[RMDB]
RNA sequence: GGGAACGACUCGAGUAGAGUCGAAAAAACUGGUUCACGACCCCGUUACUUAACGCUUCCGGGUUUUGCAGAAGCGCGUCAAAACGGUUUUGUAAUUGACUCGACCCAAGCGCUCUCUUUGGAAGGGCAUGUGUUAAGACUUCGGUCUUAACACAUGAAAAGAAACAACAACAACAAC
Reactivity to DMS in 0.01 (KOAc 150mM, MgCl2 10mM, bicine 150mM(pH8.5), 24C), signal-to-noise 5, nucleotides 027 to 126: a050a030c060u000g010g020u000u000c130a080c140g000a150c050c060c020c030g010u000u010a070c120u000u000a090a070c020g010c030u000u010c060c030g020g010g010u000u000u000u000g020c060a050g000a030a020g010c000g010c040g000u000c210a050a080a090a040c030g000g000u000u000u000u000g010u010a060a100u010u000g010a030c010u000c010g000a080c040c040c060a040a040g000c030g020c010u000c020u000c010u000u010u000g010g010a080a060g000g000g010
Reactivity to 2A3 in 0.01 (KOAc 150mM, MgCl2 10mM, bicine 150mM(pH8.5), 24C), signal-to-noise 2, nucleotides 027 to 126: a000a000c090u110g060g030u110u080c100a010c040g040a070c000c000c040c000g040u060u080a040c030u070u110a090a030c010g010c060u020u030c040c000g140g010g000u070u090u130u140g020c000a010g010a050a010g040c010g040c030g050u070c020a030a030a030a050c020g070g020u040u040u060u080g100u050a090a150u060u080g050a030c010u000c050g050a090c040c030c020a030a010g000c000g000c020u000c010u010c000u080u130u160g110g030a060a020g030g000g020